[RMDB]
RNA sequence: GGGAACGACUCGAGUAGAGUCGAAAACUGCUCCGGUUCGCCGGAGCAGAAAUGGAUCGAAUGGAAUCCAAAAUGGAAAUGGAGAUCCAAUAAGGGAUAACAAAACCAGGAUGUUCGCAUCCUGGAACAUGAUCCGAAGGUUCGCCUUCGGAUCAUGAAAAGAAACAACAACAACAAC
Reactivity to 2A3 in 0.01 (KOAc 150mM, MgCl2 10mM, bicine 150mM(pH8.5), 24C), signal-to-noise 2, nucleotides 027 to 126: c010u000g000c000u010c000c000g020g020u050u010c200g080c050c020g000g010a000g000c000a000g000a000a000a000u040g010g020a020u020c030g080a070a070u130g040g080a110a020u040c040c000a030a150a000a220u260g060g050a030a100a030u080g040g020a060g000a060u000c000c000a000a000u050a050a030g140g000g040a070u070a170a100c060a050a080a040a020c010c000a000g000g000a010u000g010u050u070c230g000c100a000u000c000c020u000g000g000a000a000
Reactivity to DMS in 0.01 (KOAc 150mM, MgCl2 10mM, bicine 150mM(pH8.5), 24C), signal-to-noise 2, nucleotides 027 to 126: c010u000g000c000u000c000c010g010g010u010u000c230g000c000c010g000g010a010g000c010a000g030a070a070a140u000g010g000a020u000c010g000a150a120u030g010g030a150a140u000c010c000a070a050a150a190u010g000g000a010a070a140u000g000g060a160g000a020u000c000c000a040a070u010a110a140g000g020g010a040u040a070a160c070a060a030a090a150c000c000a000g000g010a010u000g000u000u000c130g020c000a000u000c010c000u000g010g000a020a090